[RMDB]
RNA sequence: GGGAACGACUCGAGUAGAGUCGAAAAGGGGUCCCACCUAAGCUCCCUGGUAGUACUUUGAUCACCUGAAGCCUCCACGGGUGGGAGUACUAUAAUCAGGGAGAACGCGGUGGGACGGAGGCACCCAAACGAGCUGGGAGUUCGCUCCCAGCUCGAACAUUAACCACUCGUUCGCGAGUGGUUAAUGAAAAGAAACAACAACAACAAC
Reactivity to 2A3 in 0.01 (KOAc 150mM, MgCl2 10mM, bicine 150mM(pH8.5), 24C), signal-to-noise 1, nucleotides 027 to 156: g070g010g030g040u010c010c000c000a010c000c000u090a090a110g110c030u020c020c000c010u010g070g000u090a010g000u000a010c000u080u150u190g140a120u290c040a020c020c000u020g110a100a050g030c000c000u000c000c000a000c000g000g010g000u010g010g050g000a000g000u000a000c030u020a040u130a180a060u090c000a000g000g020g020a000g020a000a000c110g020c150g030g020u020g000g010g010a000c020g000g000a000g000g000c000a040c000c010c000a090a030a050c000g000a000g020c000u000g000g060g000a030g010u120u170c300g100c120u010c010c000c000a000g000c000u000c000g000a000a000